[RMDB]
RNA sequence: GGGAACGACUCGAGUAGAGUCGAAAAAGUCUUUAACAUUAGAUGGUGCCUUAGAAGGUGUGAAAUUUAUUUUACAACCAAGAGUAUCAGAGAUUACUGCUGAUGGCAUCUUGUUUGCGCUAGGUCACACUCGGGGUAGAUUCGUCUACCCCGAGUGAAAAGAAACAACAACAACAAC
Reactivity to 2A3 in 0.01 (KOAc 150mM, MgCl2 10mM, bicine 150mM(pH8.5), 24C), signal-to-noise 2, nucleotides 027 to 126: a000g130u090c060u040u110u050a090a150c080a170u150u230a040g100a160u210g000g060u060g030c000c000u050u000a060g020a180a000g070g000u010g020u020g000a000a000a000u200u290u240a180u100u070u000u040a060c040a140a130c020c020a090a030g020a000g080u040a000u110c030a000g000a000g050a160u130u300a230c040u210g070c000u030g000a000u080g000g000c000a130u050c020u010u100g120u000u030u140g000c010g000c070u010a040g240g000u060c010a000
Reactivity to DMS in 0.01 (KOAc 150mM, MgCl2 10mM, bicine 150mM(pH8.5), 24C), signal-to-noise 2, nucleotides 027 to 126: a050g000u010c040u000u000u000a090a090c150a180u040u010a040g000a100u040g020g040u010g020c040c000u000u000a040g000a180a170g000g000u000g010u040g000a010a020a040u010u000u000a050u000u010u010u030a030c010a040a110c010c000a120a040g030a080g000u050a010u000c030a160g000a110g000a200u010u040a090c100u070g000c000u000g000a040u000g000g040c040a060u010c010u000u000g010u000u030u000g000c120g050c040u030a030g000g000u000c090a150